[RMDB]
RNA sequence: GGGAACGACUCGAGUAGAGUCGAAAACUGACAAACUUAGUAGUGUUUGUGAGGAUUAACAACAAUUAACACAGUGCGAGCUGUUUCUUAGCACGAAGAUCUCGAUGUCUAAGAAACCAGGAGGGCCUGUCUAAUGCGGAUUCGUCCGCAUUAGACAAAAAGAAACAACAACAACAAC
Reactivity to DMS in 0.01 (KOAc 150mM, MgCl2 10mM, bicine 150mM(pH8.5), 24C), signal-to-noise 2, nucleotides 027 to 126: c020u000g010a020c020a000a000a020c010u000u010a140g030u020a100g010u030g000u000u000u020g000u010g020a040g000g020a120u050u010a090a070c140a130a140c170a050a070u030u030a110a060c190a020c130a050g000u030g000c050g020a160g010c120u010g000u020u000u000c000u020u000a000g000c000a020c000g020a030a120g020a070u040c100u000c000g010a030u010g000u050c010u000a010a000g000a000a000a020c140c150a020g010g010a100g000g010g000c010c020
Reactivity to 2A3 in 0.01 (KOAc 150mM, MgCl2 10mM, bicine 150mM(pH8.5), 24C), signal-to-noise 4, nucleotides 027 to 126: c020u120g020a010c030a010a010a000c060u140u110a040g050u080a020g080u190g010u080u020u020g010u040g080a050g150g000a140u080u180a030a060c120a030a010c010a040a080u180u140a130a040c040a000c000a120g020u050g060c010g000a030g060c050u000g010u030u000u000c010u010u010a000g000c010a000c000g000a070a050g040a180u050c010u020c030g220a300u000g130u000c000u000a000a010g000a000a020a030c030c010a000g000g090a070g000g080g030c000c000